RNA sequence: GGGAACGACUCGAGUAGAGUCGAAAAACCAAAAACGUUUAGAAGAACUUUGGAGAGUUCCUUCUUAAUUUUUUGACAGUCCCUCCUAGAUACUUUCACAGUCUAGGAGGGUCUUUAAGGUUGUCACCAAUCAUAAAGUGUUCGCACUUUAUGAUUGAAAAGAAACAACAACAACAAC
Reactivity to DMS in 0.01 (KOAc 150mM, MgCl2 10mM, bicine 150mM(pH8.5), 24C), signal-to-noise 2, nucleotides 027 to 126: a120c060c020a050a050a010a040a020c180g020u010u000u000a030g010a010a050g000a040a010c000u000u010u010g020g020a230g020a050g000u000u010c110c040u000u000c010u000u000a010a010u000u000u000u000u000u000g000a080c200a050g000u000c000c000c010u000c000c000u000a000g000a040u000a060c130u000u010u000c200a140c160a080g010u000c000u000a000g000g010a020g010g010g010u000c000u000u000u000a080a110g010g010u000u000g020u000c060a120c130
Reactivity to 2A3 in 0.01 (KOAc 150mM, MgCl2 10mM, bicine 150mM(pH8.5), 24C), signal-to-noise 2, nucleotides 027 to 126: a000c060c000a100a020a000a000a000c010g010u000u030u040a000g000a050a000g000a000a000c010u050u240u300g240g170a300g030a000g180u030u010c070c040u020u000c000u000u020a040a040u050u090u080u070u060u090g040a040c040a020g020u000c000c010c010u020c010c010u010a000g000a040u100a070c030u170u300u180c080a130c060a080g020u000c010u000a010g000g000a000g000g000g000u000c000u000u000u000a040a000g030g000u010u030g000u010c020a000c010
Background: Chemical mapping of a 177-nucleotide RNA with DMS and 2A3. Conditions: 150 mM KOAc, 10 mM MgCl2 and 150 mM bicine (pH 8.5), 24 C. The data come from the RNA Mapping Database (RMDB), library RFMREP. For DMS, 1,622 sequencing reads were counted.